[RMDB]
The data come from the RNA Mapping Database (RMDB), library M2RFPK. Chemical mapping of a 207-nucleotide RNA with 2A3 and DMS. For 2A3, 8,100 sequencing reads were counted. Conditions: 150 mM KOAc, 10 mM MgCl2 and 150 mM bicine (pH 8.5), 24 C. Values cover nucleotides 27 to 156.

RNA sequence: GGGAACGACUCGAGUAGAGUCGAAAAGGGUGAUGUCUCCAAACCUUUAUCAAUGGGGGCACUCGGUCGUGCUGUGGGUAGAAAUUUUAUUUCGUGCCUACCUUAGACGCUUGUCGUCGGGAGUAUGUGGGACUGAUGAACUUCGGUUCAUCAGUAAUCAUUAGAACAUGUUCGCAUGUUCUAAUGAAAAAGAAACAACAACAACAAC
Reactivity to 2A3 in 0.01 (KOAc 150mM, MgCl2 10mM, bicine 150mM(pH8.5), 24C), signal-to-noise 8, nucleotides 027 to 156: g040g010g010u120g030a160u030g020u010c000u000c010c010a040a100a110c040c030u170u230u150a210u190c080a090a100u060g000g010g000g000g000c000a000c020u020c020g020g010u020c030g020u030g040c080u070g020u050g010g000g000u020a020g110a020a050a030u180u250u150u160a140u030u110u080c030g030u090g010c000c010u010a020c010c000u020u050a050g000a010c000g010c050u130u280g120u290c010g010u010c000g000g040g000a060g040u120a090u140g060u100g000g030g020a000c000u000g000a000u000g000a000a000c000u020u040c190g050g000u000u000c000a000u000c000a000g000u000a000a050
Reactivity to DMS in 0.01 (KOAc 150mM, MgCl2 10mM, bicine 150mM(pH8.5), 24C), signal-to-noise 4, nucleotides 027 to 156: g000g020g020u000g020a070u010g040u000c010u000c000c010a080a070a140c060c040u000u000u000a130u000c140a080a190u000g020g040g020g030g010c030a050c040u000c030g020g000u000c060g030u000g010c060u000g020u000g000g030g030u000a300g000a030a040a040u010u020u000u000a070u010u020u000c020g000u010g030c010c010u000a030c020c020u000u000a110g010a050c020g010c030u000u010g020u010c020g030u000c010g020g020g010a140g050u000a050u000g040u010g020g030g000a070c000u000g000a000u000g000a030a010c010u000u010c300g060g020u000u000c000a010u000c000a010g000u000a040a190

2A3 adducts were read by reverse transcription with SuperScript II with manganese.